Conditions: 150 mM KOAc, 10 mM MgCl2 and 150 mM bicine (pH 8.5), 24 C.
Structure probing data (2A3 and DMS) for a 170-nucleotide construct.
DMS adducts were read by reverse transcription with MarathonRT.
[RMDB]
RNA sequence: GGGAACGACUCGAGUAGAGUCGAAAAGCCUCCCGAUACGAGUUUGCCAGGACCUAUCAAGUUUGGAGUCAUCCGGGCCCUAAGGUAGAAUAGAACCCCGGGGGGUGAUCCACCAGGAGAUGAACGGAAACACUCUUGUUCGCAAGAGUGAAAAGAAACAACAACAACAAC
Reactivity to 2A3 in 0.01 (KOAc 150mM, MgCl2 10mM, bicine 150mM(pH8.5), 24C), signal-to-noise 9, nucleotides 027 to 129: g030c000c020u020c010c000c000g020a030u070a150c090g000a080g150u020u060u060g040c010c010a010g030g000a060c010c010u070a070u150c090a150a090g050u050u110u150g030g010a030g020u040c010a060u000c030c000g030g010g000c020c000c000u060a080a050g020g000u030a020g070a120a070u110a090g050a040a040c000c000c000c020g000g000g000g000g000g000u000g010a020u000c010c000a030c010c000a030g030g020a060g020a040u100g040a050a030c050g010g020a040a030a000
Reactivity to DMS in 0.01 (KOAc 150mM, MgCl2 10mM, bicine 150mM(pH8.5), 24C), signal-to-noise 7, nucleotides 027 to 129: g020c050c020u000c040c000c040g000a110u040a070c210g000a120g000u010u020u020g010c040c060a070g000g040a070c030c020u050a100u020c090a120a100g000u030u020u000g040g020a050g020u020c120a040u000c000c000g000g000g000c050c000c030u030a070a040g000g030u000a060g010a060a060u030a070g010a080a100c060c030c020c030g000g000g030g040g010g030u020g000a040u030c010c010a110c070c060a080g030g020a080g020a030u050g000a040a030c000g000g040a150a070a060